[RMDB]
RNA sequence: GGGAACGACUCGAGUAGAGUCGAAAAUGUAGAUCCACUUUUUGUAGGAGGUAAUUGUCAAGGAGAUGUUUGUAAAACAAUUCACCCUGAGACAAUGUGGAUCGUAGAAAACGAUCAGGUUAGAUCAAGCUACACUCCAGUUCGCUGGAGUGUAGCUAAAAGAAACAACAACAACAAC
Reactivity to DMS in 0.01 (KOAc 150mM, MgCl2 10mM, bicine 150mM(pH8.5), 24C), signal-to-noise 2, nucleotides 027 to 126: u000g030u010a050g020a030u000c000c040a040c000u000u020u010u000u030g020u010a090g000g000a170g000g010u010a030a000u000u000g020u000c030a230a150g070g000a050g000a080u030g000u020u030u030g020u040a080a050a060a050c020a040a030u020u040c080a050c030c070c020u040g000a170g000a030c050a030a000u020g000u010g000g010a000u000c010g000u000a150g000a080a030a100a120c050g020a040u000c010a220g060g020u040u000a020g000a070u000c030a150
Reactivity to 2A3 in 0.01 (KOAc 150mM, MgCl2 10mM, bicine 150mM(pH8.5), 24C), signal-to-noise 2, nucleotides 027 to 126: u070g030u030a030g000a010u000c000c000a060c020u110u070u060u130u250g050u220a040g000g180a160g030g010u040a090a040u000u030g000u000c060a170a080g030g000a080g080a100u080g200u170u090u060g150u210a110a030a040a000c000a040a000u060u040c100a030c040c020c000u020g010a050g000a110c060a030a000u030g000u000g040g000a000u000c000g010u000a020g060a000a150a010a040c030g000a010u020c000a030g300g060u150u180a010g000a030u000c030a040
Chemical mapping of a 177-nucleotide RNA with DMS and 2A3. For 2A3, 1,048 sequencing reads were counted. The data come from the RNA Mapping Database (RMDB), library OK1LIB. Conditions: 150 mM KOAc, 10 mM MgCl2 and 150 mM bicine (pH 8.5), 24 C. Values cover nucleotides 27 to 126.